[RMDB]
Chemical mapping of a 207-nucleotide RNA with 2A3 and DMS. The data come from the RNA Mapping Database (RMDB), library RNAMAK. DMS adducts were read by reverse transcription with MarathonRT. The reactions ran in a buffer of 150 mM KOAc, 10 mM MgCl2 and 150 mM bicine (pH 8.5), at 24 C.
RNA sequence: GGGAACGACUCGAGUAGAGUCGAAAAUAAUGAUUCGUCAUUACUAAAGGGGUCGUCGGGGCGCUCGAAGAACGUGAACUACUUCUGAAGCCUCCACGGAAGCACGGGAGAGCGUGCACGACGACGGAGGCACCCACAGUCGCAUAUUCGUAUGCAAGAAUAUCUAGGCAUUCGUGCCUAGAUAUUCAAAAGAAACAACAACAACAAC
Reactivity to 2A3 in 0.01 (KOAc 150mM, MgCl2 10mM, bicine 150mM(pH8.5), 24C), signal-to-noise 8, nucleotides 027 to 156: u120a010a030u020g040a030u060u070c140g070u010c070a010u030u070a070c080u220a120a140a100g020g000g010g010u060c050g000u010c010g000g010g070g010c010g000c000u010c010g110a160a020g000a000a000c010g000u000g010a030a040c050u170a050c000u300u020c000u020g000a040a010g010c000c000u010c000c000a000c010g000g000a010a000g000c000a000c000g000g000g010a020g000a000g000c020g010u080g170c080a080c210g000a000c000g010a010c010g000g000a000g000g000c000a020c000c010c000a070c020a070g160u150c090g010c030a000u020a020u070u100c190g170u150a020u120g010c030a040a060
Reactivity to DMS in 0.01 (KOAc 150mM, MgCl2 10mM, bicine 150mM(pH8.5), 24C), signal-to-noise 1, nucleotides 027 to 156: u000a080a030u010g020a100u000u060c300g060u000c000a100u030u000a070c030u010a110a110a150g010g050g070g020u010c040g060u000c010g010g000g000g000c000g040c020u010c020g020a080a050g020a180a160c050g010u000g010a060a090c070u010a300c020u000u010c000u000g000a060a160g000c000c010u000c010c030a300c030g000g010a040a030g030c000a010c010g000g020g000a110g020a100g020c000g030u000g000c020a040c030g030a050c000g000a040c010g000g030a010g030g060c000a040c000c000c010a080c070a170g000u000c100g010c030a090u000a160u010u030c130g000u000a070u000g020c050a070a200
The 2A3 profile rests on 9,386 reads.